[RMDB]
RNA sequence: GGGAACGACUCGAGUAGAGUCGAAAAGCCGCUGCGACAAUCCCGACUGUGCCGCCGAGGGGCGCCCGGUGUCGGCGGUGGUGAUUCAUGUGGUGGCCGAGCAGGCCAGCGUCAAGGGCCACGGCCAGAUAACAUCCCCAUUCGUGGGGAUGUUAUCAAAAGAAACAACAACAACAAC
Reactivity to DMS in 0.01 (KOAc 150mM, MgCl2 10mM, bicine 150mM(pH8.5), 24C), signal-to-noise 4, nucleotides 027 to 126: g030c000c010g040c030u000g010c020g000a050c040a110a090u010c000c010c020g030a100c060u010g010u020g010c090c040g040c010c010g000a140g020g010g010g010c030g020c140c040c050g010g000u020g010u020c020g010g010c020g000g030u000g000g030u000g020a180u020u010c090a070u020g010u020g000g020u010g000g010c010c000g000a110g010c140a140g040g000c000c010a040g000c140g020u060c120a140a090g000g000g010c000c000a170c040g010g000c000c030a130
Reactivity to 2A3 in 0.01 (KOAc 150mM, MgCl2 10mM, bicine 150mM(pH8.5), 24C), signal-to-noise 7, nucleotides 027 to 126: g020c010c010g020c040u060g020c020g030a030c030a060a120u090c020c000c000g040a060c070u080g080u150g080c030c040g010c000c020g070a110g020g100g010g010c010g030c010c020c010g070g020u070g040u040c030g040g050c050g020g000u020g000g010u080g030a150u100u140c100a100u190g070u080g080g080u040g010g000c000c000g010a070g090c080a050g020g000c000c010a010g020c030g080u100c070a100a130g040g010g000c000c000a000c010g010g000c020c000a010